[RMDB]
Structure probing data (DMS and 2A3) for a 177-nucleotide construct.
RNA sequence: GGGAACGACUCGAGUAGAGUCGAAAAGGUAUAAGGUACCUGUACCGUAAACCGACACAGGUAGUCGAGGAGAGUAUCCUCAGGCGCUCGAGUGAUUCAUGGCUAAGGAACUCGGCAAAAUGGCCUCUUUAACUAACGAGUUCGCUCGUUAGUUAAAAAAAGAAACAACAACAACAAC
Reactivity to DMS in 0.01 (KOAc 150mM, MgCl2 10mM, bicine 150mM(pH8.5), 24C), signal-to-noise 8, nucleotides 027 to 126: g000g010u010a040u020a090a110g010g020u000a020c020c030u010g010u000a100c020c000g000u040a050a100a160c140c010g030a130c100a050c080a050g010g010u010a040g010u010c050g010a020g010g010a050g000a220g000u040a100u010c010c000u000c030a070g000g010c050g020c030u010c050g000a060g000u010g000a190u020u010c040a070u030g000g010c090u020a080a090g000g020a120a060c040u000c030g000g010c040a050a050a080a080u020g010g000c010c010u010c150
Reactivity to 2A3 in 0.01 (KOAc 150mM, MgCl2 10mM, bicine 150mM(pH8.5), 24C), signal-to-noise 6, nucleotides 027 to 126: g030g020u070a070u060a140a080g090g020u030a020c000c010u020g020u020a030c000c010g020u040a030a010a100c060c010g090a010c010a010c010a040g060g030u110a040g060u070c040g010a010g000g020a040g000a020g060u200a060u040c000c000u010c000a020g040g010c040g020c030u110c050g030a020g020u040g040a160u070u060c030a040u180g130g000c050u100a060a080g050g010a050a040c020u010c010g010g000c000a040a030a040a080u120g060g000c010c000u030c020
Notes:
For DMS the reverse transcriptase was MarathonRT. It was measured as part of the RMDB libraries RFM100 and RFMREP. For 2A3 the reverse transcriptase was SuperScript II with manganese.